About this RNA: Structure probing data (DMS and 2A3) for a 177-nucleotide construct. The data come from the RNA Mapping Database (RMDB), library TTRDES. For 2A3, 13,258 sequencing reads were counted. Conditions: 150 mM KOAc, 10 mM MgCl2 and 150 mM bicine (pH 8.5), 24 C. 2A3 adducts were read by reverse transcription with SuperScript II with manganese. Values cover nucleotides 27 to 126.

RNA sequence: GGGAACGACUCGAGUAGAGUCGAAAAAAGAUAUGGAUUUAAGGGAGAGGAAGAAGGGACGACGAAGCAGGAUCGGAAACGAUCCUGCAGAGUCCCGUACCCUCGAAGAACUUAAAUCCUAAGUCAACCUAUAGUAGUAGUUCGCUACUACUAUAGGAAAAGAAACAACAACAACAAC
Reactivity to DMS in 0.01 (KOAc 150mM, MgCl2 10mM, bicine 150mM(pH8.5), 24C), signal-to-noise 9, nucleotides 027 to 126: a110a070g000a040u010a300u000g000g000a010u000u000u000a010a000g000g010g000a070g010a020g000g010a040a070g020a240a210g000g010g010a010c000g020a200c250g020a140a140g000c000a010g010g000a010u010c000g010g010a110a080a170c010g020a010u000c000c000u000g020c000a000g000a140g010u000c000c000c000g000u000a060c300c000c000u000c010g010a100a140g000a080a170c000u000u000a010a010a010u000c000c010u000a030a090g010u000c020a110a160
Reactivity to 2A3 in 0.01 (KOAc 150mM, MgCl2 10mM, bicine 150mM(pH8.5), 24C), signal-to-noise 3, nucleotides 027 to 126: a030a010g100a060u130a070u160g000g000a000u020u000u010a010a010g020g010g010a050g010a010g050g010a100a050g050a040a070g050g030g000a010c030g060a090c040g040a110a000g000c000a000g000g010a000u000c010g020g000a030a060a030c010g000a000u000c010c000u000g000c000a000g000a000g010u000c000c000c000g000u040a010c000c010c000u000c000g060a080a020g010a000a000c000u000u000a000a020a000u000c000c000u000a140a020g040u000c010a030a060